[RMDB]
RNA sequence: GGGAACGACUCGAGUAGAGUCGAAAACGGCGUGCUGGAUGGGCUGUCGAUCGGGUUCGAUCCCGUCGAGUGGCACGUGGAGCGCGACGAGCUGGGCGACGUGAUCGUGUACGACCGCGUGCGCGUCAAGGCGUGGCAUGUUCGCAUGCCACGCCUUAAAAGAAACAACAACAACAAC
Reactivity to 2A3 in 0.01 (KOAc 150mM, MgCl2 10mM, bicine 150mM(pH8.5), 24C), signal-to-noise 1, nucleotides 027 to 126: c020g060g050c040g010u030g000c010u090g170g050a090u040g080g000g070c030u040g030u090c010g000a050u210c180g000g050g050u070u100c120g020a170u100c000c000c010g000u000c000g000a020g020u060g010g040c000a000c040g010u070g090g030a070g040c100g020c050g000a030c050g020a040g030c050u100g000g090g030c050g000a050c000g020u060g000a130u050c040g040u020g140u120a100c020g020a050c010c000g020c000g070u070g080c050g000c000g000u050c010
Chemical mapping of a 177-nucleotide RNA with 2A3. 2A3 adducts were read by reverse transcription with SuperScript II with manganese.